[RMDB]
RNA sequence: GGGAACGACUCGAGUAGAGUCGAAAAUCCACUAUGAAUCUAGUCACUAAAUAAACACAAUUAGCUACUGUGUGUAAUAGUGGGUGUUGAUAACACAAAAUAAUAGUAUAGUUUUGGAAGAUUAUACGCGCCCUUGCUCCGUUCGCGGAGCAAGGAAUCAAGUCUAUCCCUUCGGGGAUAGACUUGAAAAAGAAACAACAACAACAAC
Reactivity to 2A3 in 0.01 (KOAc 150mM, MgCl2 10mM, bicine 150mM(pH8.5), 24C), signal-to-noise 1, nucleotides 027 to 156: u020c030c000a010c030u010a060u110g050a150a000u040c040u010a040g030u060c030a000c090u050a010a070a220u170a100a270a000c060a000c040a090a250u030u080a030g040c000u040a030c000u050g050u040g010u010g000u180a010a010u000a040g000u000g000g010g040u000g000u030u030g110a220u200a240a030c050a000c010a020a120a070a000u200a160a080u130a080g000u000a000u000a010g000u020u000u130u090g100g040a040a040g000a120u020u010a000u000a020c050g080c030g050c010c000c020u010u000g000c000u000c000c010g010u030u000c100g030c000g090g020a000g000c000a010a000g000g010a010a000